[RMDB]
RNA sequence: GGGAACGACUCGAGUAGAGUCGAAAAUAUGGCUGAACGCCUCUAAGUCAGAAUCCAUGCUGGAAUAGACGAUAAUCACCUUUCCCGAUGUGCCGCGAAUAGCGAUAGGUGUCUUCUGGACACCCAAGUGCUCUAACUCUUUCGAGAGUUAGAGCACAAAAGAAACAACAACAACAAC
Reactivity to 2A3 in 0.01 (KOAc 150mM, MgCl2 10mM, bicine 150mM(pH8.5), 24C), signal-to-noise 5, nucleotides 027 to 126: u180a070u050g030g000c020u060g060a110a030c070g050c060c000u020c000u030a100a070g020u040c020a000g030a050a040u030c030c010a050u180g050c020u060g020g030a050a030u030a070g050a020c050g030a040u090a060a090u070c010a050c010c000u010u010u010c000c000c000g020a140u150g070u080g110c000c000g030c020g050a140a060u080a100g030c030g040a070u100a080g000g000u000g000u010c000u110u080c120u150g090g000a000c010a010c000c000c000a110a060
Reactivity to DMS in 0.01 (KOAc 150mM, MgCl2 10mM, bicine 150mM(pH8.5), 24C), signal-to-noise 3, nucleotides 027 to 126: u010a020u030g000g000c060u020g010a120a070c070g000c110c080u000c120u000a080a140g010u000c030a020g010a070a130u030c130c140a060u040g000c040u020g000g000a030a050u010a030g000a020c020g000a070u040a050a200u040c030a040c030c030u010u000u000c000c000c000g000a100u040g030u020g020c060c000g000c020g000a110a100u060a100g000c020g020a110u000a100g010g020u000g000u000c010u030u090c200u020g020g000a010c000a040c000c000c080a000a160